[RMDB]
RNA sequence: GGGAACGACUCGAGUAGAGUCGAAAAUAAACGAGCGUAAUCGCGUCUUGACGUGAGUGGGAUAGCCUAGACUGUAGGCUAUCCCAUGUGUGCAUAGCGCACAAUACGCUGAUCUACAGUCAAAGAACCACAGGAUGUAGUUCGCUACAUCCUGUGGAAAAGAAACAACAACAACAAC
Reactivity to DMS in 0.01 (KOAc 150mM, MgCl2 10mM, bicine 150mM(pH8.5), 24C), signal-to-noise 2, nucleotides 027 to 126: u010a030a130a110c190g000a020g010c010g030u000a020a110u000c000g010c010g030u000c100u020u000g000a030c000g020u000g000a020g010u000g020g010g010a010u000a000g020c000c000u000a120g000a010c020u000g000u000a020g000g000c000u000a010u000c000c000c000a020u000g010u000g030u000g000c000a130u010a150g010c070g030c020a020c000a040a110u000a000c000g000c000u000g010a090u010c180u030a000c000a000g010u000c010a120a140a080g000a110a130
Reactivity to 2A3 in 0.01 (KOAc 150mM, MgCl2 10mM, bicine 150mM(pH8.5), 24C), signal-to-noise 2, nucleotides 027 to 126: u270a040a090a020c160g010a020g000c000g000u010a020a020u000c010g020c000g050u020c050u130u280g080a000c000g000u000g000a020g000u030g000g000g000a000u000a000g010c010c000u010a090g000a040c010u010g000u000a000g000g000c000u010a010u010c000c000c000a000u000g010u000g000u000g000c050a200u210a180g030c020g000c040a000c000a000a020u020a020c000g000c000u000g000a070u010c030u030a010c010a020g000u010c000a020a060a060g060a050a090